[RMDB]
RNA sequence: GGGAACGACUCGAGUAGAGUCGAAAACACCUGAAGUGACUGAAGUUAGUCCGGUUUAGGUAUGAGAAUGAUUGGAGCACCUCUCCAGAUGUUCCAGAUGUAAUGAAACCGGUGCAAGCUUCAAGCUCAUAAGUGGCUACUUCGGUAGCCACUUAUGAAAAGAAACAACAACAACAAC
Reactivity to 2A3 in 0.01 (KOAc 150mM, MgCl2 10mM, bicine 150mM(pH8.5), 24C), signal-to-noise 5, nucleotides 027 to 126: c130a070c000c030u050g100a150a060g100u070g060a030c050u010g020a000a010g010u040u020a010g020u010c000c000g010g030u000u000u060a100g090g030u120a080u160g200a220g020a140a050u120g080a090u130u020g000g000a000g010c060a100c110c010u160c020u000c040c000a030g040a100u090g010u000u000c000c010a000g040a120u190g070u220a110a040u150g140a060a000a000c000c000g000g000u110g020c030a040a020g000c000u000u010c020a020a000g000c000u010
Reactivity to DMS in 0.01 (KOAc 150mM, MgCl2 10mM, bicine 150mM(pH8.5), 24C), signal-to-noise 2, nucleotides 027 to 126: c160a180c020c020u010g010a160a130g020u000g010a060c110u000g000a020a000g040u000u000a280g040u000c000c000g000g000u000u000u000a030g040g000u000a050u000g000a170g040a020a010u000g000a120u040u000g000g000a110g000c300a070c220c100u110c120u060c120c160a020g000a010u000g050u010u000c000c010a000g040a020u020g020u000a090a110u040g000a020a040a000c010c000g000g000u000g040c070a010a090g000c000u000u000c010a030a050g000c060u030